[RMDB]
RNA sequence: GGGAACGACUCGAGUAGAGUCGAAAAAUGAUUUCGGCGACGGGCCAACGACGCCAAUGGUGCCGGGUUCGUGGGAUCCGGACCGGGAUGCGCCUGGCUCGGCGGAGCCUGGAGAUCGGGGCUGAGCAUGUCAAUCGCUAUUCGUAGCGAUUGACAUAAAAGAAACAACAACAACAAC
Reactivity to 2A3 in 0.01 (KOAc 150mM, MgCl2 10mM, bicine 150mM(pH8.5), 24C), signal-to-noise 1, nucleotides 027 to 126: a000u040g020a010u040u090u060c020g030g010c050g020a020c040g020g020g060c000c040a060a000c070g090a020c050g020c010c010a020a030u050g050g000u220g300c020c010g000g020g020u060u050c120g090u280g200g150g000a010u010c010c010g010g010a000c000c000g000g000g000a070u160g000c030g020c010c050u020g010g000c040u000c000g040g010c020g090g010a050g020c020c010u040g070g000a040g000a040u060c020g020g010g020g000c060u110g080a020g060c050
Reactivity to DMS in 0.01 (KOAc 150mM, MgCl2 10mM, bicine 150mM(pH8.5), 24C), signal-to-noise 1, nucleotides 027 to 126: a090u000g010a050u000u000u010c050g020g020c020g010a050c010g010g000g000c000c010a070a050c120g020a060c020g010c010c020a040a050u020g000g010u010g020c010c010g010g020g020u000u000c030g030u000g010g010g000a020u000c000c000g010g000a040c020c010g000g000g010a130u000g030c030g010c020c010u000g030g000c000u000c010g020g020c060g010g010a180g000c020c010u010g030g000a030g000a070u000c020g000g000g000g010c130u000g010a140g000c110
The record gives the reactivity of an RNA of 177 nucleotides to 2A3 and DMS. It was measured as part of the RMDB library OK2TRN. DMS adducts were read by reverse transcription with MarathonRT. The RNA was probed in 150 mM KOAc, 10 mM MgCl2 and 150 mM bicine (pH 8.5) at 24 C.